[RMDB]
RNA sequence: GGGAACGACUCGAGUAGAGUCGAAAAUGAUACUGGUUCUGCAAAUGAUGCGGUAAAGUCCCGAAUGCACAUCUCUGCUUUGGUAUACUAGCUUGCAGUAGCAUCUGUUGAUUGGAUUUGUAGGUGGACUGGCUGACGGAGAAAAUGAGGGAAGCCACGGAUCAUUAAUCUUCGGAUUAAUGAUCCGAAAAGAAACAACAACAACAAC
Reactivity to 2A3 in 0.01 (KOAc 150mM, MgCl2 10mM, bicine 150mM(pH8.5), 24C), signal-to-noise 2, nucleotides 027 to 156: u100g030a040u080a120c070u040g040g000u060u080c040u030g000c020a000a010a130u190g130a070u040g000c100g060g020u090a110a040a000g030u060c000c000c000g050a030a090u130g000c040a010c000a140u060c080u000c000u070g000c010u080u090u070g040g000u090a090u020a150c060u040a070g060c060u020u060g000c010a000g010u010a080g020c020a000u000c060u130g060u050u090g090a260u060u100g060g010a080u100u000u110g000u020a070g000g000u020g000g020a080c030u010g010g000c010u060g010a040c010g000g000a050g080a040a090a010a050u130g030a080g030g030g030a020a010g000c020c000a020
Reactivity to DMS in 0.01 (KOAc 150mM, MgCl2 10mM, bicine 150mM(pH8.5), 24C), signal-to-noise 1, nucleotides 027 to 156: u020g000a090u000a060c030u000g000g030u010u010c000u010g000c090a040a060a140u000g010a080u000g050c020g030g050u000a040a060a130g000u000c040c020c000g000a090a060u050g000c020a040c030a080u000c040u020c110u000g020c000u000u010u020g040g020u000a060u020a080c070u000a090g000c050u000u000g030c010a140g040u000a100g050c040a040u000c020u000g000u010u020g000a100u000u000g000g000a180u000u000u000g010u000a060g020g070u000g030g010a030c060u000g010g030c000u000g000a180c040g000g000a160g020a030a050a040a100u000g000a110g010g040g000a080a110g110c070c050a070
Record summary
Source: RMDB library OK3TST, as collected in RNAgym. This 207-nucleotide RNA was probed chemically with 2A3 and DMS. The DMS profile rests on 2,156 reads. The reactions ran in a buffer of 150 mM KOAc, 10 mM MgCl2 and 150 mM bicine (pH 8.5), at 24 C.